[RMDB]
RNA sequence: GGGAACGACUCGAGUAGAGUCGAAAACUUGCGAAUCCAGAUACCACAAUGUCACAGUUGUGACAGGAGAAAAUGUUACAUUCAACUCCACGGCCGACACCCAGUGGUCAUGGAGCCACCACGGUAGCUAUGUAUACAUCUGCAAUAGCUCCACCUCGCCCCAAAAACAUUUCGAUGUUUUUGGGGCAAAAGAAACAACAACAACAAC
Reactivity to 2A3 in 0.01 (KOAc 150mM, MgCl2 10mM, bicine 150mM(pH8.5), 24C), signal-to-noise 3, nucleotides 027 to 156: c050u050u150g050c050g070a040a040u060c070c030a060g040a150u140a010c020c010a020c080a140a120u040g020u050c020a010c060a260g210u240u180g010u200g020a030c040a010g010g000a050g130a010a070a030a030u200g050u150u070a050c080a110u090u120c030a080a040c010u000c000c000a020c000g020g000c010c010g020a030c040a100c070c020c040a030g040u050g080g000u000c000a010u020g000g010a020g010c020c010a090c030c000a120c040g050g050u050a010g010c020u000a000u070g030u010a050u020a210c090a120u080c040u040g000c000a080a170u000a030g000c000u050c010c010a020c020c030u050c040
An RNA of 207 nucleotides, treated with 2A3 and read out base by base.